[RMDB]
RNA sequence: GGGAACGACUCGAGUAGAGUCGAAAACUAGGACUGAGACUAGAGAGUCUCUCUCAGAGAGGAGACUGAGACUAGGAAGAGAGUCCUCUAGUCCUGAAGAGCUGAGAUCUCCUCUUCGACUCUAGGAUCUCGAAGCUCUCUGACUGAUCCUGAGAUCCCGCUAAAAGACUUUCGAGUCUUUUAGCGGAAAAGAAACAACAACAACAAC
Reactivity to 2A3 in 0.01 (KOAc 150mM, MgCl2 10mM, bicine 150mM(pH8.5), 24C), signal-to-noise 1, nucleotides 027 to 156: c060u050a100g060g120a040c050u060g030a010g000a140c010u010a040g000a020g060a100g090u010c000u010c020u000c010u000c000a030g000a000g000a010g050g000a040g010a000c000u010g010a010g010a020c030u060a110g050g140a150a070g170a000g020a020g140u080c040c040u020c010u000a000g020u040c030c030u090g050a070a070g010a020g010c010u050g000a020g000a020u010c010u000c040c000u020c000u030u000c020g020a020c000u060c070u170a010g010g010a020u000c000u010c010g000a030a000g000c000u000c000u020c010u050g060a100c050u050g010a060u000c000c010u040g030a010g000a030u120c010

This 207-nucleotide RNA was probed chemically with 2A3. The reactions ran in a buffer of 150 mM KOAc, 10 mM MgCl2 and 150 mM bicine (pH 8.5), at 24 C. 2A3 adducts were read by reverse transcription with SuperScript II with manganese. Source: RMDB library OK3TST, as collected in RNAgym.